[RMDB]
Chemical mapping of a 177-nucleotide RNA with DMS and 2A3.
Reactivities are given for positions 27 through 126.
The DMS profile rests on 733 reads.
For 2A3 the reverse transcriptase was SuperScript II with manganese.
The 2A3 profile rests on 1,050 reads.

RNA sequence: GGGAACGACUCGAGUAGAGUCGAAAACCGGGAGAGUUCGCUCUCCCGGAAAAGACCGCUCCUGCGGGAGCUAAAUUCGCACGGACAGCCGGAAUAAAUGCAAAACUGGUAUCUUCGGAUACCAGAACAUACCUACAGCGUUCGCGCUGUAGGUAUGAAAAGAAACAACAACAACAAC
Reactivity to DMS in 0.01 (KOAc 150mM, MgCl2 10mM, bicine 150mM(pH8.5), 24C), signal-to-noise 1, nucleotides 027 to 126: c000c000g020g010g040a000g000a020g010u010u030c160g020c030u000c010u010c020c000c000g000g000a020a000a160a070g000a160c050c110g020c010u000c020c030u030g030c110g030g010g010a010g030c020u000a010a060a080u010u010c050g030c020a120c130g000g000a070c080a080g050c080c020g000g000a120a160u000a020a050a060u000g000c120a110a040a100a110c000u000g000g000u010a020u000c000u020u000c240g030g000a010u010a010c010c000a000g000a010a120
Reactivity to 2A3 in 0.01 (KOAc 150mM, MgCl2 10mM, bicine 150mM(pH8.5), 24C), signal-to-noise 1, nucleotides 027 to 126: c000c000g020g000g000a020g000a000g030u100u210c180g040c040u020c000u000c000c000c000g000g000a010a000a000a000g030a040c030c010g000c000u010c000c000u060g050c220g070g000g010a000g000c000u000a020a000a060u130u110c040g010c030a010c070g030g050a080c050a120g140c070c030g000g030a080a130u160a130a110a080u220g070c050a040a020a040a140c010u000g000g000u010a010u000c000u010u060c130g040g010a010u010a000c000c010a000g000a000a000